[RMDB]
RNA sequence: GGGAACGACUCGAGUAGAGUCGAAAACAAGUUCGCCCAGCACAAGUUCCUGUUCUCCCGGGAGAUCGGCUCGGAGUCGAAGGUGUUGAUCCAUCGCGACCCGAAGGAACGGGUGCAACGCGUGGCGUAGUAGCAGACAUUUCGAUGUCUGCUACUAAAAAGAAACAACAACAACAAC
Reactivity to DMS in 0.01 (KOAc 150mM, MgCl2 10mM, bicine 150mM(pH8.5), 24C), signal-to-noise 5, nucleotides 027 to 126: c100a120a070g000u010u020c020g000c000c010c030a170g000c010a010c010a040a050g000u000u000c000c000u000g000u010u000c010u010c050c020c080g020g000g010a100g000a080u000c020g020g030c150u010c010g010g000a140g010u000c000g010a060a060g010g020u000g000u030u020g000a160u050c250c000a030u010c010g000c020g000a010c010c010c000g000a050a050g000g000a040a010c000g000g030g050u010g000c030a120a060c160g010c220g010u030g010g010c020g020
Reactivity to 2A3 in 0.01 (KOAc 150mM, MgCl2 10mM, bicine 150mM(pH8.5), 24C), signal-to-noise 7, nucleotides 027 to 126: c050a090a050g100u110u100c010g010c000c010c020a010g000c010a030c020a040a060g020u030u020c010c010u030g050u030u020c030u050c000c030c020g210g150g000a080g010a080u130c050g120g010c030u010c010g050g010a180g040u020c010g040a210a120g010g000u020g030u090u280g070a050u060c020c000a010u040c030g000c010g030a000c000c000c000g040a040a030g020g010a030a000c000g030g010g000u030g010c040a110a130c060g030c050g170u210g030g000c040g020
This 177-nucleotide RNA was probed chemically with DMS and 2A3. For DMS, 10,640 sequencing reads were counted. The 2A3 profile rests on 7,376 reads. It was measured as part of the RMDB library OK1LIB. The reactions ran in a buffer of 150 mM KOAc, 10 mM MgCl2 and 150 mM bicine (pH 8.5), at 24 C.